Record summary: An RNA of 207 nucleotides, treated with 2A3 and read out base by base. Conditions: 150 mM KOAc, 10 mM MgCl2 and 150 mM bicine (pH 8.5), 24 C. Values cover nucleotides 27 to 156. For 2A3, 1,378 sequencing reads were counted. The data come from the RNA Mapping Database (RMDB), library RNAMAK.
RNA sequence: GGGAACGACUCGAGUAGAGUCGAAAAUCCUAAGUCGAUUGCACUUGGAUUUAAUAAAUGGAGUGUAUUCGGAAACGAAUACACGUUGAAAUUUAUUUGUCAGUGCUAUCGAUAUGGAAAACUGUCUUAGUCAGGGUUCGCCCUGACUAAGACAGAAGGAUGACAAUAGCUUCGGCUAUUGUCAUCCAAAAGAAACAACAACAACAAC
Reactivity to 2A3 in 0.01 (KOAc 150mM, MgCl2 10mM, bicine 150mM(pH8.5), 24C), signal-to-noise 1, nucleotides 027 to 156: u040c020c000u040a130a000g040u000c000g000a000u010u000g000c000a000c030u100u170g180g010a060u300u260u190a020a000u020a000a000a010u020g000g020a030g020u010g010u000a010u000u000c010g000g080a120a130a020c010g010a000a000u010a000c030a010c010g000u030u020g000a010a020a000u000u000u020a000u000u010u020g020u000c000a010g000u000g000c000u000a000u000c010g000a010u010a090u080g080g010a050a120a010a030c000u010g020u000c000u000u020a000g000u000c000a010g000g010g000u040u080c140g110c040c000c000u000g000a000c000u000a010a000g000a000c010a000g010a010a000